[RMDB]
RNA sequence: GGGAACGACUCGAGUAGAGUCGAAAAGACGCCUUGUUGCCUGUACCCAGGGUGGGCCACUCCCCCCACCACACAUCCCCAGCCCCCGCCCUGUUCCCAGGCUCUUUGACUUGGAUGCCCCUGGGGCUAGUCGAGUAUGUUUCGACAUACUCGACUAAAAAGAAACAACAACAACAAC
Reactivity to DMS in 0.01 (KOAc 150mM, MgCl2 10mM, bicine 150mM(pH8.5), 24C), signal-to-noise 2, nucleotides 027 to 126: g000a110c170g010c020c050u000u010g020u010u000g010c040c010u000g020u010a080c100c050c020a080g000g010g040u000g000g020g030c130c080a180c120u000c010c030c070c020c000c000a090c080c050a070c120a060c150a130u020c030c010c000c050a150g000c100c050c010c010c030g020c010c010c010u000g010u010u000c040c050c000a160g020g000c030u000c080u000u000u010g010a080c070u010u010g000g010a060u000g000c040c030c000c060u010g000g020g000g010c170

The record gives the reactivity of an RNA of 177 nucleotides to DMS. It was measured as part of the RMDB library OK2TRN. Values cover nucleotides 27 to 126. The RNA was probed in 150 mM KOAc, 10 mM MgCl2 and 150 mM bicine (pH 8.5) at 24 C.